RNA sequence: GGGAACGACUCGAGUAGAGUCGAAAAGAUAUGGAUAUUCGAGGAUCGGUUGCACUAUGAAGUCGGAAACGAUGGAGUGCGGACCGGGAGAAUAUCCUAAGUCAAAACGGCUAGUUCGCUAGCCGAAGAUGUUUGAGAUGUUCGCAUCUCAAACAUCAAAAGAAACAACAACAACAAC
Reactivity to DMS in 0.01 (KOAc 150mM, MgCl2 10mM, bicine 150mM(pH8.5), 24C), signal-to-noise 3, nucleotides 027 to 126: g000a040u010a300u000g000g010a010u000a030u000u000c000g020a110g010g030a050u000c010g000g020u000u000g010c010a000c000u000a220u010g010a110a300g000u000c010g020g000a110a080a160c010g020a020u010g010g010a010g010u000g000c010g030g030a000c000c000g000g020g010a050g000a020a010u000a010u000c000c000u000a030a090g010u010c010a080a080a090a250c040g000g000c000u010a010g020u000u010c250g010c010u000a010g020c000c000g000a020a040
Reactivity to 2A3 in 0.01 (KOAc 150mM, MgCl2 10mM, bicine 150mM(pH8.5), 24C), signal-to-noise 3, nucleotides 027 to 126: g030a020u090a070u140g000g000a010u010a010u020u020c030g060a280g090g020a060u010c000g010g000u000u000g130c000a010c010u200a300u300g060a060a030g020u000c010g030g000a080a070a030c010g000a000u040g010g040a030g000u010g010c020g030g040a000c000c000g000g010g000a040g000a000a000u010a010u000c000c000u010a080a010g090u040c030a000a000a110a140c000g000g000c010u010a000g040u090u070c300g010c140u000a000g000c000c010g000a000a030